Conditions: 150 mM KOAc, 10 mM MgCl2 and 150 mM bicine (pH 8.5), 24 C. Structure probing data (DMS) for a 177-nucleotide construct. For DMS, 594 sequencing reads were counted.
RNA sequence: GGGAACGACUCGAGUAGAGUCGAAAAGUGGAACGGGCAGUACCUCGUGACGUUGUCUGCCAACGCGAAAACCGGCACCAGCAUGGCGGCCAACCGGCCAGAGUAUCCACACAAAGCGAACUACACGCGUAUGCGGAGUCUUCGGACUCCGCAUACGAAAAGAAACAACAACAACAAC
Reactivity to DMS in 0.01 (KOAc 150mM, MgCl2 10mM, bicine 150mM(pH8.5), 24C), signal-to-noise 1, nucleotides 027 to 126: g130u000g000g060a140a070c060g000g010g010c000a100g000u010a230c090c050u010c060g030u000g000a060c160g000u000u000g000u000c020u020g010c000c010a120a110c200g010c050g030a130a040a070a140c050c050g000g000c050a010c100c120a120g000c010a050u020g000g000c020g020g040c010c040a050a050c160c120g010g000c040c010a050g000a050g090u010a040u030c020c000a080c030a120c170a090a070a200g000c000g000a000a020c030u010a190c090a120c160g010